[RMDB]
RNA sequence: GGGAACGACUCGAGUAGAGUCGAAAACCACCGGGUAGUUUCCAACUCCGUCUUGUGUGAAGAAGGAGCCGUUCCACGCAGGACGCGAACAAGAAGAAGCCGAAGCAACUUCAGGGCGCCGCGCACGCAGUGUGAGUAACUUCGGUUACUCACACUGAAAAGAAACAACAACAACAAC
Reactivity to 2A3 in 0.01 (KOAc 150mM, MgCl2 10mM, bicine 150mM(pH8.5), 24C), signal-to-noise 1, nucleotides 027 to 126: c020c020a020c040c000g030g000g000u040a060g060u000u030u030c040c000a030a060c070u000c020c010g070u020c010u070u060g010u000g000u050g070a060a300g020a020a060g160g090a010g040c010c010g000u040u000c010c010a000c000g000c030a000g010g050a020c020g020c110g010a060a030c080a010a060g150a060a000g040a070a000g060c030c050g090a070a010g010c020a040a080c030u070u030c020a040g000g010g070c040g000c000c000g060c000g040c020a040c080g060
Reactivity to DMS in 0.01 (KOAc 150mM, MgCl2 10mM, bicine 150mM(pH8.5), 24C), signal-to-noise 2, nucleotides 027 to 126: c010c010a150c220c070g010g000g030u000a020g010u010u000u000c010c020a170a140c100u000c030c010g000u010c010u010u000g000u010g020u000g020a090a060g020a130a090g000g000a030g000c070c010g010u010u000c000c000a020c020g020c020a020g000g000a040c010g010c060g000a050a080c100a090a100g000a070a080g000a110a180g020c030c030g010a050a070g000c020a070a120c040u000u000c060a100g000g000g020c080g030c030c010g020c090g000c060a050c150g010